[RMDB]
RNA sequence: GGGAACGACUCGAGUAGAGUCGAAAACAUAAACGCUUCGGCGUUUAUGAAAUAAAAUCAGCGGUAAGCUCGCCUAAAAUAUUACCGCUGAACGCGAGCUUAAAACGGGACAGUUCGCUGUCCCGAAGUCUAAAUAGAGGUUCGCCUCUAUUUAGACAAAAGAAACAACAACAACAAC
Reactivity to 2A3 in 0.01 (KOAc 150mM, MgCl2 10mM, bicine 150mM(pH8.5), 24C), signal-to-noise 5, nucleotides 027 to 126: c000a000u010a000a000a000c000g010c010u050u060c230g130g000c010g000u000u000u000a000u000g000a010a010a000u150a000a110a000a110u040c010a000g000c010g020g010u010a020a010g040c050u070c080g090c010c030u120a120a110a050a070u240a080u050u040a010c010c000g000c010u000g000a010a000c010g040c030g070a120g040c020u110u200a050a070a030a050c000g010g010g010a000c000a000g010u050u090c130g040c100u000g000u000c020c000c000g000a010a000
Reactivity to DMS in 0.01 (KOAc 150mM, MgCl2 10mM, bicine 150mM(pH8.5), 24C), signal-to-noise 3, nucleotides 027 to 126: c010a020u000a000a000a000c010g020c010u000u020c220g020g010c000g020u000u000u000a000u000g000a070a090a100u010a050a070a090a120u000c020a010g000c000g010g020u000a030a020g010c110u000c110g000c060c090u010a060a030a080a070u010a060u000u010a030c020c010g010c010u000g010a010a060c190g010c080g010a060g020c050u000u000a030a050a120a160c010g000g010g000a010c000a020g010u000u010c240g020c010u000g000u000c000c000c010g010a010a030